Description:
Source: RMDB library ARCHII, as collected in RNAgym. Chemical mapping of a 207-nucleotide RNA with DMS and 2A3. The RNA was probed in 150 mM KOAc, 10 mM MgCl2 and 150 mM bicine (pH 8.5) at 24 C. For 2A3 the reverse transcriptase was SuperScript II with manganese. The 2A3 profile rests on 4,005 reads. DMS adducts were read by reverse transcription with MarathonRT.
RNA sequence: GGGAACGACUCGAGUAGAGUCGAAAAGGUUGAGUGAUUACGUGUGUAAGCAUGCAGGCUCAUGGGAUGAGAGCCUUAAAAGAUAGUUCCGAACAAUAAUUGGCGAAGAAUCUUACGCCAUGGCUGCUUAAUUACGAACUAAGUUUGUAAUAAUGAGGCUAAUGUUAUUCUUCGGAAUAACAUUAGCAAAAGAAACAACAACAACAAC
Reactivity to DMS in 0.01 (KOAc 150mM, MgCl2 10mM, bicine 150mM(pH8.5), 24C), signal-to-noise 3, nucleotides 027 to 156: g030g000u010u010g030a120g010u000g000a080u010u030a020c060g050u010g040u010g020u000a050a100g010c020a040u020g040c070a050g010g000c000u000c020a060u020g020g020g000a100u000g010a140g020a070g020c010c010u000u000a020a090a070a110g010a100u010a190g000u000u000c010c010g030a130a100c100a080a100u000a040a110u010u000g010g030c020g020a110a110g010a080a110u010c070u000u000a210c010g030c010c010a060u000g020g040c000u000g000c010u000u000a060a060u010u000a020c010g010a010a030c010u020a070a180g040u000u000u000g010u000a020a040u010a020a120u000g000a240g010
Reactivity to 2A3 in 0.01 (KOAc 150mM, MgCl2 10mM, bicine 150mM(pH8.5), 24C), signal-to-noise 5, nucleotides 027 to 156: g080g010u080u070g030a060g020u050g010a100u130u100a070c040g020u050g020u040g020u100a020a070g050c020a050u120g040c030a020g020g000c000u010c010a010u030g010g000g010a000u060g020a030g000a000g000c000c000u040u080a050a060a000a010g030a020u030a010g010u050u010c020c020g030a040a000c020a040a010u170a100a090u100u040g000g000c020g020a060a010g050a100a090u070c040u120u060a050c020g000c000c000a000u000g020g010c020u010g010c020u050u040a040a020u050u010a020c010g020a010a010c020u090a210a120g040u010u030u040g030u030a030a020u030a090a080u120g040a040g100